[RMDB]
RNA sequence: GGGAACGACUCGAGUAGAGUCGAAAAUGGCGGUCUCUGGCAAAUUGGUCCGUAAUUGGGCCAGAAGGGUGCCUGGCUUUGCCGCAGGUGGCCUGGGAGGGUCCCAUAGCGGGUGGGUGCCUGGUGGCGAUAUAUUAAAAUUCGUUUUAAUAUAUCGAAAAGAAACAACAACAACAAC
Reactivity to 2A3 in 0.01 (KOAc 150mM, MgCl2 10mM, bicine 150mM(pH8.5), 24C), signal-to-noise 9, nucleotides 027 to 126: u100g030g010c020g010g080u030c030u010c030u070g050g000c030a030a040a110u110u050g020g000u010c000c010g020u040a030a090u150u170g010g010g000c010c000a010g010a020a030g030g040g020u020g010c000c000u010g050g000c010u070u090u130g040c010c010g020c010a010g010g040u090g060g050c010c020u020g010g010g040a130g010g000g020u030c010c000c000a040u070a020g050c030g000g050g040u140g030g020g010u050g010c000c020u050g040g040u050g030g010
Reactivity to DMS in 0.01 (KOAc 150mM, MgCl2 10mM, bicine 150mM(pH8.5), 24C), signal-to-noise 8, nucleotides 027 to 126: u020g010g010c030g000g000u010c030u010c030u000g010g010c060a050a090a140u030u000g000g010u000c030c010g010u010a090a110u060u080g000g010g020c000c000a020g000a110a100g010g000g010u010g000c010c000u010g010g010c050u010u010u030g010c050c050g020c050a050g010g010u010g010g020c010c020u000g000g010g000a130g000g000g000u000c010c000c010a070u020a100g010c090g000g000g010u040g000g000g000u010g010c030c030u000g000g020u010g010g010